An RNA of 177 nucleotides, treated with DMS and 2A3 and read out base by base. The RNA was probed in 150 mM KOAc, 10 mM MgCl2 and 150 mM bicine (pH 8.5) at 24 C. 2A3 adducts were read by reverse transcription with SuperScript II with manganese.

RNA sequence: GGGAACGACUCGAGUAGAGUCGAAAACUUGAAAAAUUGUUAGAAGUCCAAGAGCACCCGCGAUGCGGAUAAACCAGCAGUGCUGGCCCCGAUGGCAACAGCGUGGCCCCUUGUGCUUUCCGCUACACUAGUAUGGAUGGUUCGCCAUCCAUACUAGAAAAGAAACAACAACAACAAC
Reactivity to DMS in 0.01 (KOAc 150mM, MgCl2 10mM, bicine 150mM(pH8.5), 24C), signal-to-noise 3, nucleotides 027 to 126: c030u010u020g000a050a100a130a090a120u000u010g010u020u010a100g010a110a090g030u000c100c020a020a040g000a160g010c080a080c080c040c030g010c070g020a130u010g020c020g010g000a070u000a030a090a060c040c030a030g010c050a110g010u010g010c050u000g010g000c050c020c040c020g010a060u000g010g020c150a070a090c060a070g010c030g030u000g010g010c240c010c070c010u010u000g000u010g010c070u000u000u000c050c040g020c090u000a100c200a140
Reactivity to 2A3 in 0.01 (KOAc 150mM, MgCl2 10mM, bicine 150mM(pH8.5), 24C), signal-to-noise 2, nucleotides 027 to 126: c020u010u050g120a080a080a000a160a270u190u150g040u090u120a170g020a120a010g070u020c090c050a030a000g000a030g100c030a030c020c050c060g010c050g070a030u140g040c040g030g050a070u180a090a040a050c030c010a010g000c030a030g110u050g210c020u040g030g000c000c000c000c000g080a130u080g060g020c020a130a030c020a100g040c010g040u060g000g000c000c020c000c000u020u060g040u040g030c080u030u010u040c020c050g050c030u050a020c060a010